Structure probing data (2A3 and DMS) for a 177-nucleotide construct. For 2A3 the reverse transcriptase was SuperScript II with manganese. DMS adducts were read by reverse transcription with MarathonRT. For DMS, 867 sequencing reads were counted.

RNA sequence: GGGAACGACUCGAGUAGAGUCGAAAAAGCUGCGUGAGCUCAAGCUGCACACGGUGUGCGAGGAGGCGCGCUGCCCCAACAUCGGCGAGUGCUGGGGCGGCGGCGACGGCCACACAGCGACGGCCACCGCUCUCAAGACGUUCGCGUCUUGAGAGCGAAAAGAAACAACAACAACAAC
Reactivity to 2A3 in 0.01 (KOAc 150mM, MgCl2 10mM, bicine 150mM(pH8.5), 24C), signal-to-noise 1, nucleotides 027 to 126: a030g030c000u000g020c010g010u020g050a050g000c020u040c100a060a100g040c040u040g010c020a020c030a040c150g300g000u150g000u030g050c010g040a140g090g040a070g050g090c010g000c000g010c080u000g000c020c000c000c000a010a020c010a010u120c040g230g000c120g110a160g090u020g000c020u030g030g000g000g000c030g000g000c030g020g000c000g020a020c020g050g000c020c010a000c010a000c000a000g000c000g030a060c050g000g000c010c000a040c000
Reactivity to DMS in 0.01 (KOAc 150mM, MgCl2 10mM, bicine 150mM(pH8.5), 24C), signal-to-noise 1, nucleotides 027 to 126: a170g020c010u000g130c090g020u000g020a100g000c000u000c070a090a220g000c070u000g010c010a110c060a170c200g060g030u000g000u000g040c000g000a140g020g000a090g010g020c030g050c010g010c010u000g000c040c020c000c000a020a000c020a010u000c040g020g010c090g000a180g030u000g020c050u000g000g010g000g050c000g020g020c030g010g000c070g000a110c270g000g010c030c020a040c010a040c040a040g070c050g010a100c150g040g000c000c000a130c180